[RMDB]
RNA sequence: GGGAACGACUCGAGUAGAGUCGAAAACGCGCUGAAGUAUGUGGCCAGCACGCUGGAGGGCGACGUGCCCUGCGGGCUGUGCUCGCGCGACGACCGGCACGCGUGCGCACACACGACGCUGCACCGGCUGCGGCACCGGCUGCCCCGGUUUGGCGCGCAGCCCUCGUCUAUUCGUAGACGAGGGCUGAAAAGAAACAACAACAACAAC
Reactivity to 2A3 in 0.01 (KOAc 150mM, MgCl2 10mM, bicine 150mM(pH8.5), 24C), signal-to-noise 2, nucleotides 027 to 156: c000g010c000g030c030u020g010a100a000g120u150a130u160g000u150g110g030c030c010a000g000c050a010c100g000c010u030g010g030a000g020g050g020c010g050a200c090g090u200g050c000c000c030u040g030c100g030g050g000c070u070g010u030g000c000u010c000g010c010g000c000g000a080c030g090a100c000c110g070g030c070a040c100g000c000g000u030g030c040g030c000a020c000a000c000a020c040g150a010c010g040c050u110g080c050a050c030c000g000g030c030u030g000c010g010g000c020a010c040c070g050g000c080u070g040c010c090c000c000g010g000u000u000u050g020g010c010g000c000g000
The record gives the reactivity of an RNA of 207 nucleotides to 2A3. Source: RMDB library OK3TST, as collected in RNAgym.